[RMDB]
RNA sequence: GGGAACGACUCGAGUAGAGUCGAAAAGAUAUGGACCUUCCCAGCUCGAAGAACUCGGAAACGAGGGAGAGCGGGACUGGGUCCUAAGUCAAAGGUCCGUGUCUAAGUUCGCUUAGACACGGACCAACCAAUCUAGAUUCUUCGGAAUCUAGAUUGGAAAAGAAACAACAACAACAAC
Reactivity to DMS in 0.01 (KOAc 150mM, MgCl2 10mM, bicine 150mM(pH8.5), 24C), signal-to-noise 4, nucleotides 027 to 126: g000a050u010a300u000g000g000a000c000c000u000u010c000c000c000a200g050c000u000c000g010a100a220g000a170a240c010u000c000g010g000a130a140a190c010g020a010g000g000g000a060g020a010g040c010g000g000g000a020c300u020g000g010g000u000c010c000u010a030a090g010u000c040a080a160a110g000g030u000c000c000g000u000g010u000c000u000a010a000g020u000u010c240g020c000u000u010a010g000a010c000a000c000g010g000a000c000c010a000a040
Reactivity to 2A3 in 0.01 (KOAc 150mM, MgCl2 10mM, bicine 150mM(pH8.5), 24C), signal-to-noise 3, nucleotides 027 to 126: g020a010u080a050u210g000g000a020c000c000u020u010c010c000c010a100g000c000u030c000g300a300a100g010a090a030c000u000c000g000g070a100a060a050c020g000a010g000g020g000a040g000a000g000c060g000g000g000a030c230u180g040g030g000u000c000c000u020a090a010g040u030c060a190a040a070g020g000u010c040c000g000u000g000u000c000u000a000a020g010u040u150c280g040c230u010u010a000g000a000c000a000c000g000g010a000c000c000a010a000